[RMDB]
RNA sequence: GGGAACGACUCGAGUAGAGUCGAAAAAAAUUUUGCUCCUUUCUUGAAAACUAUCCUACCAGAAAUCUUCAAGACACUAGAAUUAGAUGAAUACCAAUUCAACUUCGAUGGUGAUGCAGAGGAUUUAUCAUUAUCCUGAGUUCGCUCAGGAUAAUGAAAAAGAAACAACAACAACAAC
Reactivity to 2A3 in 0.01 (KOAc 150mM, MgCl2 10mM, bicine 150mM(pH8.5), 24C), signal-to-noise 2, nucleotides 027 to 126: a000a020a020u110u110u030u040g020c040u040c020c000u000u030u050c010u020u010g040a000a100a050a000c040u040a110u060c020c000u070a100c030c040a060g170a070a060a010u010c010u050u020c020a070a050g080a040c020a000c000u080a060g070a180a110u200u040a110g020a070u060g010a010a040u050a230c050c020a040a040u020u000c030a050a040c040u050u080c040g080a040u060g050g030u000g010a040u100g060c020a040g010a010g050g000a010u040u080u000a080
Reactivity to DMS in 0.01 (KOAc 150mM, MgCl2 10mM, bicine 150mM(pH8.5), 24C), signal-to-noise 2, nucleotides 027 to 126: a030a030a070u020u010u020u000g030c060u000c050c020u000u000u010c000u010u000g000a070a060a050a020c090u010a100u000c030c000u000a080c130c070a180g000a010a040a030u000c020u000u000c010a090a120g020a080c040a000c030u000a020g000a170a090u000u020a030g030a120u000g000a010a020u000a070c300c130a060a080u010u000c020a030a060c030u000u000c050g000a190u000g000g010u000g000a110u010g000c060a190g010a060g000g020a040u000u000u000a070